[RMDB]
The record gives the reactivity of an RNA of 207 nucleotides to 2A3.
RNA sequence: GGGAACGACUCGAGUAGAGUCGAAAAACCUUUGUGUAAGCGGGAAAGAGAACUUGGAUUUACAGGCGGCCCUCCCAUUGGGAGGACUGCCUGUUGUCAGUUCUUAACACGCUUACACUCUGGUAAAGCAAAUACUCCCUUCGGGGAGUAUUUGCAAUCCAUUCGGUAUGUUCGCAUACCGAAUGGAAAAAGAAACAACAACAACAAC
Reactivity to 2A3 in 0.01 (KOAc 150mM, MgCl2 10mM, bicine 150mM(pH8.5), 24C), signal-to-noise 1, nucleotides 027 to 156: a000c000c020u010u010u000g000u000g000u000a000a010g000c020g020g050g040a070a230a170g030a030g000a000a000c030u080u150g100g030a090u300u300u200a020c010a000g000g000c040g000g000c000c000c000u000c000c040c060a300u220u300g010g010g000a000g000g000a000c000u010g010c070c020u000g000u000u000g000u000c000a010g000u000u040c000u000u000a030a000c020a000c020g010c000u010u000a000c000a000c000u020c000u000g030g000u100a160a000a000g000c000a000a000a000u000a000c000u000c000c010c000u000u080c260g060g000g000g000a000g000u010a000u000u000u000g010c000a000a000
About this RNA: High 2A3 reactivity points to a flexible backbone, as in loops and unpaired stretches.